Notes
The record gives the reactivity of an RNA of 177 nucleotides to 2A3 and DMS. High DMS reactivity at an A or C suggests that its Watson-Crick edge is free. For 2A3 the reverse transcriptase was SuperScript II with manganese. DMS adducts were read by reverse transcription with MarathonRT. Source: RMDB libraries RFM100 and RFMREP, as collected in RNAgym. Values cover nucleotides 27 to 126. The RNA was probed in 150 mM KOAc, 10 mM MgCl2 and 150 mM bicine (pH 8.5) at 24 C.
[RMDB]
RNA sequence: GGGAACGACUCGAGUAGAGUCGAAAAAUCUGUUAAAGGGUCGCCGUCUACUCUCAUCGUUCUUUUGUGUACAAAUUUUUUAAAGGAGCGAUGUUGAUGGCAUUAUGGUUCUUUAGUGGAGAAUUGACCCAAAUUAAACUUUCGAGUUUAAUUUGGGAAAAGAAACAACAACAACAAC
Reactivity to 2A3 in 0.01 (KOAc 150mM, MgCl2 10mM, bicine 150mM(pH8.5), 24C), signal-to-noise 7, nucleotides 027 to 126: a000u010c000u010g020u000u000a010a000a000g010g000g010u010c020g010c010c000g010u020c030u070a140c070u090c010u010c090a010u000c000g020u010u010c030u020u020u020u020g090u010g030u050a070c100a050a180a100u170u130u050u120u230u300a020a030a010g000g000a000g000c000g000a000u000g010u030u020g010a020u020g000g000c020a010u110u140a130u300g000g000u010u000c000u010u010u010a020g000u020g010g020a020g030a050a080u080u110g060a080
Reactivity to DMS in 0.01 (KOAc 150mM, MgCl2 10mM, bicine 150mM(pH8.5), 24C), signal-to-noise 3, nucleotides 027 to 126: a080u000c010u000g000u020u000a010a010a000g000g000g010u000c000g030c030c010g030u010c000u020a100c230u020c180u040c060a010u000c000g020u000u000c000u000u000u000u000g000u030g000u060a190c260a050a100a060u020u020u040u010u040u030a010a020a010g000g010a040g000c010g030a010u010g000u010u000g000a020u000g020g010c010a120u010u030a080u030g000g010u000u000c000u000u000u010a010g000u000g030g000a050g020a150a070u000u020g000a300